The record gives the reactivity of an RNA of 177 nucleotides to 2A3 and DMS. The data come from the RNA Mapping Database (RMDB), library M2PK50. DMS adducts were read by reverse transcription with MarathonRT. The RNA was probed in 150 mM KOAc, 10 mM MgCl2 and 150 mM bicine (pH 8.5) at 24 C.
RNA sequence: GGGAACGACUCGAGUAGAGUCGAAAAGUUAACCCGUUCGCGGGUUAACAAAGAAACUGGAAGGCGGGGCGAGCUGCAGCCCCAGUCAAUCAAAUGCAGCAAAAACCGUAAGCUUCGGCUUACGGAAGACUAGGUGUUAGUUCGCUAACACCUAGUCAAAAGAAACAACAACAACAAC
Reactivity to 2A3 in 0.01 (KOAc 150mM, MgCl2 10mM, bicine 150mM(pH8.5), 24C), signal-to-noise 2, nucleotides 027 to 126: g010u000u000a000a010c000c000c000g000u030u060c240g000c020g090g000g020u010u000a000a000c000a010a010a000g020a030a130a020c100u130g090g140a100a020g120g030c070g030g010g020g020c010g010a030g010c010u010g000c010a000g000c010c000c010c000a020g020u030c020a000a030u060c000a000a000a060u100g010c020a000g000c010a040a010a010a030a020c010c000g000u020a010a000g010c000u030u170c280g080g010c000u010u000a000c000g000g000a010a010
Reactivity to DMS in 0.01 (KOAc 150mM, MgCl2 10mM, bicine 150mM(pH8.5), 24C), signal-to-noise 1, nucleotides 027 to 126: g010u020u000a010a000c020c000c000g060u000u010c170g020c020g050g000g000u010u000a000a000c000a060a080a130g000a080a080a140c080u010g000g020a070a080g060g010c060g020g010g030g000c000g000a160g010c000u010g010c020a190g000c000c000c000c000a070g000u010c050a020a080u000c150a040a030a030u010g000c000a000g010c030a040a030a060a130a060c000c000g010u000a000a010g020c010u000u000c180g080g020c000u000u020a000c000g000g010a040a020